Structure probing data (2A3 and DMS) for a 177-nucleotide construct. It was measured as part of the RMDB library TTRDEL. As a SHAPE reagent, 2A3 marks flexible, mostly unpaired nucleotides at the ribose 2'-OH. For 2A3 the reverse transcriptase was SuperScript II with manganese. The RNA was probed in 150 mM KOAc, 10 mM MgCl2 and 150 mM bicine (pH 8.5) at 24 C.

RNA sequence: GGGAACGACUCGAGUAGAGUCGAAAAGAUAUGGACUAAGAGCGAUAAGCAGCAAUCGGAAACGAUUGGCUGCUUUUGACGCUCGAUGUCCUAAGUCAAAACUGCUACUAGUUCGCUAGUAGCAGAACCUAUAAAACCGGUUCGCCGGUUUUAUAGGAAAAGAAACAACAACAACAAC
Reactivity to 2A3 in 0.01 (KOAc 150mM, MgCl2 10mM, bicine 150mM(pH8.5), 24C), signal-to-noise 1, nucleotides 027 to 126: g030a020u090a020u090g000g000a010c000u060a140a000g000a020g020c020g060a150u070a300a020g010c000a000g000c010a000a000u010c030g010g060a050a010a020c030g020a010u000u010g090g190c000u000g000c000u000u020u000u030g000a000c000g010c010u000c000g000a000u020g000u000c000c000u000a000a000g010u010c020a010a010a120a170c000u020g000c000u000a000c010u010a000g020u040u030c240g010c180u000a000g000u010a010g000c000a000g000a000a000
Reactivity to DMS in 0.01 (KOAc 150mM, MgCl2 10mM, bicine 150mM(pH8.5), 24C), signal-to-noise 6, nucleotides 027 to 126: g010a020u000a300u000g010g000a010c000u010a300a220g000a000g020c010g030a140u010a010a010g010c000a010g000c000a010a000u000c000g000g000a080a070a090c000g010a000u000u000g020g040c000u000g010c000u000u000u000u010g000a180c030g010c000u000c000g000a090u010g010u000c000c000u000a020a090g000u000c020a080a040a090a180c010u000g010c000u010a000c000u010a010g010u000u010c190g010c000u000a010g010u000a000g010c000a000g000a020a090